[RMDB]
RNA sequence: GGGAACGACUCGAGUAGAGUCGAAAAGUUGCAGGUAGGCGGCAAGUGAGUUCAUCCCCAUGAGCAUAGACGGGCUAUGUGAUUGGGGUGAACGAACGCAGCCCCCCUGCAGCUUCAAGUAGGAAGGGAGGGCAUUCUAAUUCGUUAGAAUGCCCUCAAAAGAAACAACAACAACAAC
Reactivity to DMS in 0.01 (KOAc 150mM, MgCl2 10mM, bicine 150mM(pH8.5), 24C), signal-to-noise 3, nucleotides 027 to 126: g020u000u000g000c010a010g020g020u020a100g020g030c080g030g000c000a080a170g000u000g000a300g010u000u000c000a000u030c040c000c000c010a000u000g000a300g010c000a000u000a000g000a300c300g040g010g010c000u000a020u000g000u020g000a300u000u000g000g000g000g040u000g010a000a020c020g040a150a040c020g010c140a300g000c010c020c020c180c000c000u020g010c010a000g000c000u000u000c030a020a070g030u050a110g010g030a060a050g000g020
Reactivity to 2A3 in 0.01 (KOAc 150mM, MgCl2 10mM, bicine 150mM(pH8.5), 24C), signal-to-noise 5, nucleotides 027 to 126: g000u000u000g000c000a000g030g010u190a090g010g070c120g020g000c040a090a080g020u000g030a030g000u000u010c030a140u300c030c000c000c000a000u010g000a010g010c010a000u010a000g040a050c150g060g070g100c020u000a010u020g040u040g010a030u000u000g000g000g010g000u010g000a000a000c000g000a000a000c000g000c030a010g010c000c010c000c000c000c000u000g000c000a000g000c000u000u020c010a030a020g050u050a050g050g140a130a060g120g070
The record gives the reactivity of an RNA of 177 nucleotides to DMS and 2A3. Values cover nucleotides 27 to 126. For DMS the reverse transcriptase was MarathonRT. 2A3 adducts were read by reverse transcription with SuperScript II with manganese.